Overview
An RNA of 177 nucleotides, treated with 2A3 and read out base by base. The RNA was probed in 150 mM KOAc, 10 mM MgCl2 and 150 mM bicine (pH 8.5) at 24 C. Reactivities are given for positions 27 through 126. 2A3 is a SHAPE reagent: it acylates the 2'-hydroxyl of flexible nucleotides of all four kinds.
RNA sequence: GGGAACGACUCGAGUAGAGUCGAAAAGAAAAGAAUGAGUGUGCAAGAGCGAGGCACACUCUACUCGCUCAAAAAGAAAAUGCAGAACCUGCUGCUACAGGAAAAGAAAAAGCCUAAUGGCGAAAAAGGGUAUCUGAUUGUUCGCAAUCAGAUACCCAAAAGAAACAACAACAACAAC
Reactivity to 2A3 in 0.01 (KOAc 150mM, MgCl2 10mM, bicine 150mM(pH8.5), 24C), signal-to-noise 1, nucleotides 027 to 126: g030a030a070a020a000g160a000a070u200g010a000g040u000g000u000g000c000a060a060g030a010g260c020g100a050g140g000c000a000c000a000c000u000c000u020a010c000u000c010g100c000u080c010a000a180a000a000a000g150a040a030a030a030u220g000c000a000g020a140a110c000c000u000g020c000u020g030c000u010a010c030a040g180g000a000a000a040a070g130a000a060a000a140a000g000c010c000u160a250a120u300g010g090c140g150a140a000a000a000a000